[RMDB]
RNA sequence: GGGAACGACUCGAGUAGAGUCGAAAAACUGGCUGCCUCUGCAGUGGUGGCAAAAGGCACUCCACAGCAUCGUUGGUGCCUACAGUGGCCUCCGAUCUGAUGUGCGGCUGACCUUGCGGUUUCAGUUCCAUGAUUUUUCCGAGGUACAAGCCGUUGACUAGAGCGAGAAAUUCGUUUCUCGCUCUAGAAAAGAAACAACAACAACAAC
Reactivity to 2A3 in 0.01 (KOAc 150mM, MgCl2 10mM, bicine 150mM(pH8.5), 24C), signal-to-noise 2, nucleotides 027 to 156: a000c020u030g090g020c000u030g000c010c050u090c070u080g040c040a090g040u040g040g030u040g010g000c060a030a030a040a070g050g010c020a030c080u080c040c060a030c000a050g210c020a090u070c070g020u030u040g040g010u030g000c000c000u070a120c060a080g070u070g110g030c010c020u010c040c020g050a150u050c010u080g060a140u160g090u090g050c010g010g000c000u020g010a020c000c000u010u080g110c120g050g000u010u020u110c020a040g020u120u170c060c010a030u140g060a080u050u120u080u110u050c050c020g030a010g010g010u070a060c040a090a000g020c020c010g000u030u050g020a000